Source: RMDB library TTRDEL, as collected in RNAgym. An RNA of 177 nucleotides, treated with DMS and read out base by base. The RNA was probed in 150 mM KOAc, 10 mM MgCl2 and 150 mM bicine (pH 8.5) at 24 C. Reactivities are given for positions 27 through 126.
[RMDB]
RNA sequence: GGGAACGACUCGAGUAGAGUCGAAAAGAUAUGGACCUUGUGUGUAGCUAAUCGGAAACGAUUUAGCGCAGAUACAUUGAGGUCCUAAGUCAAAAGAGAGGUAACCCCUUCGGGGGUUACCUCUCAAGAAUAGUGACAGGUUCGCCUGUCACUAUUCAAAAGAAACAACAACAACAAC
Reactivity to DMS in 0.01 (KOAc 150mM, MgCl2 10mM, bicine 150mM(pH8.5), 24C), signal-to-noise 2, nucleotides 027 to 126: g000a020u000a300u000g000g000a010c000c000u000u010g030u000g010u000g020u000a140g000c000u000a010a020u000c000g010g010a100a100a240c010g010a010u000u010u000a000g020c000g030c200a100g010a080u000a020c000a010u000u000g030a030g030g010u000c000c000u000a020a080g010u000c030a100a120a140a150g000a000g010a020g000g000u010a000a010c000c010c000c020u000u000c270g020g050g000g000g020u000u000a000c000c000u000c000u010c000a010a020